[RMDB]
RNA sequence: GGGAACGACUCGAGUAGAGUCGAAAAGUAUGUGCCUCCCCUGCCAACCCUUCUGACUCUCAGUGCAGGGCGGGCGUCGUCCUCCCUGUGAGCCUUCCCUGAGACCAGGUGGGCUGGGUGCCCACUAGACCACUUAACAAUUCGUUGUUAAGUGGUCAAAAGAAACAACAACAACAAC
Reactivity to DMS in 0.01 (KOAc 150mM, MgCl2 10mM, bicine 150mM(pH8.5), 24C), signal-to-noise 9, nucleotides 027 to 126: g010u010a060u010g020u010g010c030c010u000c210c010c000c020u000g010c020c050a050a090c050c020c020u000u010c040u000g010a080c120u000c030u000c050a080g020u010g010c030a020g010g000g030c150g010g010g010c030g010u010c130g010u010c010c010u000c010c010c000u000g000u010g010a080g010c030c030u000u000c050c020c000u000g000a100g000a110c110c060a060g010g010u000g000g000g010c010u000g010g010g010u010g000c000c000c010a050c080u000a090
Reactivity to 2A3 in 0.01 (KOAc 150mM, MgCl2 10mM, bicine 150mM(pH8.5), 24C), signal-to-noise 4, nucleotides 027 to 126: g060u060a090u250g110u100g060c010c010u030c030c020c000c000u010g020c010c010a070a060c020c020c000u060u100c030u080g050a080c000u010c010u020c070a030g050u040g160c020a000g010g010g010c030g020g000g010c030g090u110c060g030u030c010c010u020c010c000c000u030g020u030g030a030g040c010c020u040u020c020c010c000u030g050a060g030a060c040c020a020g040g000u010g010g010g000c010u040g050g060g050u140g010c010c000c000a020c000u020a030